[RMDB]
Chemical mapping of a 177-nucleotide RNA with 2A3 and DMS. It was measured as part of the RMDB library TTRDEL. Reactivities are given for positions 27 through 126. The DMS profile rests on 1,352 reads. The RNA was probed in 150 mM KOAc, 10 mM MgCl2 and 150 mM bicine (pH 8.5) at 24 C.
RNA sequence: GGGAACGACUCGAGUAGAGUCGAAAAGAUAUGGAGACGAUAAGUGUGCACGAUGAUGACCUCGGAAACGAGCAAGUCGGGGCACUUUUGACGUCUCCUAAGUCAGCGCCAGUCUUCGGACUGGCAAGCCCUGAACAAGGUUCGCCUUGUUCAGGGCAAAAGAAACAACAACAACAAC
Reactivity to 2A3 in 0.01 (KOAc 150mM, MgCl2 10mM, bicine 150mM(pH8.5), 24C), signal-to-noise 2, nucleotides 027 to 126: g010a010u080a000u150g000g000a000g010a000c020g020a030u000a090a010g080u040g010u140g200c100a040c130g000a000u050g010a070u090g070a050c010c010u010c000g030g000a040a090a030c010g010a010g030c010a090a140g000u000c010g010g000g170g000c000a000c030u050u000u040u070g120a040c050g000u000c010u000c000c000u000a020a000g000u000c030a030g210c020g000c170c000a010g000u000c000u020u110c260g120g020a010c000u000g000g000c020a000a010
Reactivity to DMS in 0.01 (KOAc 150mM, MgCl2 10mM, bicine 150mM(pH8.5), 24C), signal-to-noise 2, nucleotides 027 to 126: g000a020u000a300u010g000g020a010g000a000c000g030a250u000a020a000g030u000g020u000g010c030a100c050g000a010u000g000a080u020g000a130c300c010u000c010g010g000a110a130a180c000g000a030g010c060a020a180g010u000c010g000g000g020g020c010a000c010u010u000u000u010g000a160c070g000u000c000u000c000c000u000a020a010g000u000c030a090g000c250g000c000c000a010g000u000c020u000u020c180g000g000a020c000u020g010g000c000a020a020